[RMDB]
RNA sequence: GGGAACGACUCGAGUAGAGUCGAAAAAUGAUUUAUGCUGUAAAUCAGAAAGGUUGCCAUCUCUCUGGAUGGAAAUGCAUAGUCAUAUGCCCGUAAAUGCAGGGAUUUGACCUCCUAUAAAAAAGCUCUCUCUUCCCCCUCAUUUAUGUGAUGAUUAGGUAAUUUUAGCAUUCGUGCUAAAAUUACCAAAAGAAACAACAACAACAAC
Reactivity to 2A3 in 0.01 (KOAc 150mM, MgCl2 10mM, bicine 150mM(pH8.5), 24C), signal-to-noise 1, nucleotides 027 to 156: a040u010g010a000u140u240u160a000u010g010c040u020g050u150a110a040a070u080c020a140g130a190a090a050g080g000u040u080g170c040c000a020u020c020u040c060u020c180u200g040g050a000u040g010g010a050a250a000u050g000c000a010u000a020g010u040c020a000u000a010u160g000c020c000c000g010u030a010a010a010u100g040c090a030g000g000g020a020u130u030u000g080a070c000c050u080c010c030u090a090u200a080a090a020a010a000a000g020c010u010c000u000c000u000c000u000u090c000c000c050c030c090u070c010a030u000u000u160a030u040g110u030g030a070u000g010a060u160u070a010